[RMDB]
RNA sequence: GGGAACGACUCGAGUAGAGUCGAAAAUGUCAGGUAGCUGUGAUGCACUUUCAUGUGCUUACCGAUCAGCAUGGCUCCUCCCCAGCUAAGAAGUUCCGCUGGGCGACCGGUACCCUGCAUGAGGUAAGCAGGAAGUCCGAUGAACAUGUAUCCGCAGGAUUACCACCUAGUUCGCUAGGUGGUAAUCAAAAGAAACAACAACAACAAC
Reactivity to 2A3 in 0.01 (KOAc 150mM, MgCl2 10mM, bicine 150mM(pH8.5), 24C), signal-to-noise 6, nucleotides 027 to 156: u130g010u050c030a020g040g100u140a050g030c040u040g050u060g080a050u100g040c020a010c040u050u070u040c080a100u180g030u040g130c000u010u000a010c000c000g060a110u080c000a010g000c000a010u050g000g000c020u010c020c000u050c010c000c000c000a000g000c000u110a170a080g050a190a220g250u250u060c080c040g000c000u010g000g030g020c090g050a050c080c150g000g010u030a020c000c000c000u010g000c010a090u070g000a020g000g000u000a000a000g010c000a000g010g020a020a010g030u030c040c050g070a090u090g030a040a010c030a070u090g020u070a040u060c050c040g000c040a030g110
Reactivity to DMS in 0.01 (KOAc 150mM, MgCl2 10mM, bicine 150mM(pH8.5), 24C), signal-to-noise 3, nucleotides 027 to 156: u010g020u010c060a120g040g010u010a030g030c030u000g030u020g000a140u010g020c030a040c030u000u000u000c070a120u020g030u010g030c010u010u000a050c010c030g010a190u010c030a110g000c010a050u000g030g040c020u000c030c020u010c020c020c000c040a180g000c030u010a120a130g000a110a250g010u010u000c080c110g020c030u000g020g020g040c090g010a030c040c110g010g010u000a130c040c000c020u000g000c010a140u000g000a300g030g030u010a040a020g020c020a030g010g000a050a090g000u000c020c040g010a140u000g020a050a080c070a080u000g010u000a080u000c030c030g020c120a120g000
An RNA of 207 nucleotides, treated with 2A3 and DMS and read out base by base. For 2A3, 5,320 sequencing reads were counted. Reactivities are given for positions 27 through 156. The RNA was probed in 150 mM KOAc, 10 mM MgCl2 and 150 mM bicine (pH 8.5) at 24 C. The DMS profile rests on 5,129 reads.